[RMDB]
The record gives the reactivity of an RNA of 177 nucleotides to DMS and 2A3.
For DMS, 2,281 sequencing reads were counted.
In probing experiments dimethyl sulfate is read out at A N1 and C N3, which are open when not base-paired.
The reactions ran in a buffer of 150 mM KOAc, 10 mM MgCl2 and 150 mM bicine (pH 8.5), at 24 C.
Values cover nucleotides 27 to 126.
RNA sequence: GGGAACGACUCGAGUAGAGUCGAAAAACGGUUUCAUCGAACGUUGCCUGGUACCGUUUGGUCUGCACCACAUCUGGAACGUACCUUUCCAGAUGCAGAUUGGUGAAUACACCAACGCAGCAGGUCACAUGCUCACCUAGUUCGCUAGGUGAGCAUGAAAAGAAACAACAACAACAAC
Reactivity to DMS in 0.01 (KOAc 150mM, MgCl2 10mM, bicine 150mM(pH8.5), 24C), signal-to-noise 3, nucleotides 027 to 126: a030c010g000g010u010u010u010c070a050u000c140g000a150a120c160g010u000u000g010c020c010u000g020g000u000a060c180c020g010u000u010u010g000g010u000c040u000g000c020a080c050c060a160c030a030u000c010u000g000g000a000a030c300g020u020a080c300c160u000u000u010c000c010a010g000a020u000g000c060a050g010a220u010u000g000g030u000g010a180a130u010a090c120a020c030c010a010a010c050g020c120a140g010c010a010g020g000u000c090a130
Reactivity to 2A3 in 0.01 (KOAc 150mM, MgCl2 10mM, bicine 150mM(pH8.5), 24C), signal-to-noise 2, nucleotides 027 to 126: a000c050g030g040u070u090u090c060a050u080c110g060a080a090c080g060u080u100g040c020c010u010g050g020u010a020c020c000g000u020u040u050g040g010u010c040u070g020c010a000c010c000a050c000a010u000c000u020g000g000a010a030c010g070u130a170c010c020u030u050u000c010c000a010g000a000u010g000c020a040g050a220u060u060g010g010u030g030a080a020u110a120c060a000c000c000a010a000c030g000c110a300g020c020a010g040g020u020c030a030